[RMDB]
An RNA of 177 nucleotides, treated with 2A3 and DMS and read out base by base.

RNA sequence: GGGAACGACUCGAGUAGAGUCGAAAAAGAGUCAGCCUGAAAGGUAUCCUGAGCGGCGGCAAAAGCUGCGGCCCGGGACAGAGGGCGAGGAGAUGGUGGAGGUGCCUGUGGCGGUCCGUACAACACGACAUGACAUCUGGUUCGCCAGAUGUCAUGUAAAAGAAACAACAACAACAAC
Reactivity to 2A3 in 0.01 (KOAc 150mM, MgCl2 10mM, bicine 150mM(pH8.5), 24C), signal-to-noise 4, nucleotides 027 to 126: a010g100a000g070u080c050a050g050c030c020u050g110a080a010a040g120g010u140a100u060c000c010u000g000a000g010c030g050g000c000g000g000c080a160a200a060a180g000c000u030g010c000g280g000c010c000c000g020g000g000a020c010a010g080a060g010g020g000c010g020a040g010g010a130g030a050u100g010g040u060g010g060a070g020g020u090g010c000c010u100g030u060g080g010c050g010g040u070c080c030g030u080a030c000a100a040c060a030c100g110
Reactivity to DMS in 0.01 (KOAc 150mM, MgCl2 10mM, bicine 150mM(pH8.5), 24C), signal-to-noise 4, nucleotides 027 to 126: a070g010a120g010u000c040a180g010c010c000u030g000a140a090a170g010g020u030a130u010c000c000u000g000a080g000c020g010g030c030g020g010c020a130a090a060a180g000c000u000g020c000g000g000c030c010c020g010g030g020a040c160a100g000a220g000g000g000c040g000a140g010g010a050g010a050u000g010g010u010g000g010a100g000g020u010g020c040c020u000g020u010g000g000c020g000g030u000c040c040g000u060a060c120a100a050c200a110c200g000
Source: RMDB library OK1LIB, as collected in RNAgym. 2A3 adducts were read by reverse transcription with SuperScript II with manganese.